RNA sequence: GGGAACGACUCGAGUAGAGUCGAAAAGAAAGAAAGAAAGAAACCGUCUCUGCUAGUCUCACGGUAACCACGUUGAAAUCGCAACGAAAGAAUCUCGCACUCAACUUCAACGGCUUAACGAGUGCAAAAAACUUACUGAUCUUCGGAUCAGUAAGAAGAUGUCUAAUUUGUUCGCAAAUUAGACAUCAAAAGAAACAACAACAACAAC
Reactivity to 2A3 in 0.01 (KOAc 150mM, MgCl2 10mM, bicine 150mM(pH8.5), 24C), signal-to-noise 4, nucleotides 027 to 156: g050a010a080a010g080a040a090a020g050a050a190a020g030a080a070a020c040c010g020u010c030u010c030u080g040c020u030a060g040u070c040u030c080a050c030g050g000u040a040a070c010c010a020c040g000u010u020g090a120a130a090u180c110g010c110a020a030c030g040a070a010a020g040a040a040u040c060u050c170g010c000a000c000u010c000a020a060c030u050u030c010a040a040c040g050g030c040u030u010a030a000c030g010a000g010u020g000c030a130a000a000a000a000a000c000u000u000a000c000u000g000a000u020c000u010u050c110g030g000a000u000c000a000g000u000a000a000g000a000a000
Reactivity to DMS in 0.01 (KOAc 150mM, MgCl2 10mM, bicine 150mM(pH8.5), 24C), signal-to-noise 2, nucleotides 027 to 156: g030a170a050a100g010a160a110a070g010a170a010a080g000a160a140a020c030c000g030u000c000u000c030u000g000c050u000a080g000u010c030u000c020a080c030g000g000u000a030a130c000c040a040c070g000u020u010g000a010a110a040u000c130g040c040a020a050c040g000a030a070a200g010a120a170u000c070u020c050g020c010a110c050u000c030a050a110c040u000u000c000a030a050c040g010g000c030u000u020a050a160c180g000a050g080u010g010c030a010a010a030a050a040a100c010u000u000a020c000u010g000a030u000c020u000u010c280g070g000a010u000c000a010g000u000a000a000g000a020a050